[RMDB]
RNA sequence: GGGAACGACUCGAGUAGAGUCGAAAAGGUGAUUGUGAUACUCGCUACUGUCAUUCAUCGAAUGACAGUAUUAGACUGCUACAAUCACAUUACGUGACUCAAUUAUUUAGCAGUCUAAUUGAUAACAUAACGCGAGAUAUGUUAAAGUCACGUAUCGCGAACGUAGAUAGUUCGCUAUCUACGUUCGAAAAGAAACAACAACAACAAC
Reactivity to 2A3 in 0.01 (KOAc 150mM, MgCl2 10mM, bicine 150mM(pH8.5), 24C), signal-to-noise 9, nucleotides 027 to 156: g090g000u000g000a010u000u000g000u010g010a010u010a030c000u000c000g000c000u000a000c000u000g000u000c000a000u000u010c050a180u140c250g020a010a000u000g000a000c000a000g000u000a000u000u000a000g000a000c000u000g000c010u020a000c000a000a000u000c000a000c000a000u030u070a000c000g000u000g000a000c010u020c080a120a220u130u090a140u120u240u130a020g000c000a000g000u000c000u000a000a000u010u040g080a060u070a170a020c040a060u100a050a010c080g000c010g000a010g040a060u020a010u020g030u020u090a190a120a020g000u000c000a000c000g000u010a040u070c060g000
Reactivity to DMS in 0.01 (KOAc 150mM, MgCl2 10mM, bicine 150mM(pH8.5), 24C), signal-to-noise 4, nucleotides 027 to 156: g020g040u000g010a020u000u000g030u000g010a160u000a070c010u000c020g030c050u010a050c000u010g010u010c000a010u010u000c010a300u000c190g010a040a000u000g000a030c000a000g010u000a010u000u000a030g000a010c020u000g020c020u010a050c030a020a030u010c000a000c010a140u000u000a040c040g020u000g000a030c010u000c050a090a120u000u000a120u000u000u000a070g030c000a050g020u000c010u000a010a020u000u000g020a180u000a070a080c120a100u000a050a140c080g030c000g010a050g010a120u000a040u000g050u000u000a050a070a100g010u000c000a020c010g020u000a080u000c120g010